[RMDB]
This 207-nucleotide RNA was probed chemically with 2A3.
Conditions: 150 mM KOAc, 10 mM MgCl2 and 150 mM bicine (pH 8.5), 24 C.

RNA sequence: GGGAACGACUCGAGUAGAGUCGAAAACAGGAAACUGGUUAAUCGGUUUCCUUGGUAGUAUAGCGGAAACCAUAAAUAAGAAGAACUCUAAGUGCUUGAGUAGAGUUAAAAUAAUUAGACAGGCAAUUAAGGUACUCCACGUUCGCGUGGAGUACAAGUGCUCUAUUUCGUUCGCGAAAUAGAGCACAAAAGAAACAACAACAACAAC
Reactivity to 2A3 in 0.01 (KOAc 150mM, MgCl2 10mM, bicine 150mM(pH8.5), 24C), signal-to-noise 2, nucleotides 027 to 156: c050a000g000g010a010a010a030c010u040g000g100u270u230a110a080u260c020g000g000u000u000u000c000c010u000u050g010g000u010a040g010u020a030u040a080g060c050g030g060a050a080a030c020c020a040u130a090a080a010u120a130a040g050a050a010g000a060a030c000u000c000u010a000a000g030u070g260c000u000u010g010a010g000u010a010g000a010g010u090u110a030a000a000a010u070a010a000u220u010a020g000a000c000a010g000g000c000a010a010u200u240a130a140g090g000u000a000c000u000c000c000a000c000g020u040u050c110g010c000g070u000g000g000a000g000u000a000c000a000a000
Source information:
The data come from the RNA Mapping Database (RMDB), library M2RFPK.